[RMDB]
RNA sequence: GGGAACGACUCGAGUAGAGUCGAAAACGCGGUGAAAUGACGGUUGGAAUUCAAGAUCGCGUAAUUGCAAAAUCAGUUGAUUCUGUAAUUGAGAAUGCGCGAUUCAAUGCGUUGAUUAACUCAGAGCAUAACGAAUACGUCAAAGUUUUAGAGCAACUCAAUACCGGGAGUUCGCUCCCGGUAUUGAAAAAGAAACAACAACAACAAC
Reactivity to 2A3 in 0.01 (KOAc 150mM, MgCl2 10mM, bicine 150mM(pH8.5), 24C), signal-to-noise 2, nucleotides 027 to 156: c100g020c030g060g100u120g050a040a060a100u080g020a030c000g010g040u070u080g120g050a060a090u070u020c020a070a030g000a040u000c000g010c020g000u020a040a090u000u040g020c000a010a000a090a230u090c000a060g180u180u170g120a030u170u020c000u020g050u010a100a080u030u080g030a010g110a150a050u160g010c010g000c000g000a000u060u000c010a030a020u050g020c010g070u030u020g040a060u050u120a130a040c090u010c060a000g010a020g030c000a020u020a050a040c070g020a090a000u090a050c010g020u030c040a010a000a060g040u030u070u070u120a050g040a000g000c020a000a030c030
Reactivity to DMS in 0.01 (KOAc 150mM, MgCl2 10mM, bicine 150mM(pH8.5), 24C), signal-to-noise 1, nucleotides 027 to 156: c030g000c020g000g040u010g030a040a040a170u000g000a110c000g040g020u010u000g010g000a180a160u000u030c070a090a220g000a000u000c000g010c010g000u000a050a040u010u010g000c000a030a030a000a060u000c010a260g030u000u010g010a060u000u000c020u030g000u000a000a020u030u000g030a300g000a100a150u000g000c010g050c030g010a050u000u000c080a130a140u010g000c000g000u000u000g010a050u010u010a070a060c230u020c010a060g030a060g030c020a060u010a180a140c090g010a250a160u000a050c030g000u000c040a070a070a190g000u000u000u000u000a090g030a110g030c030a030a030c050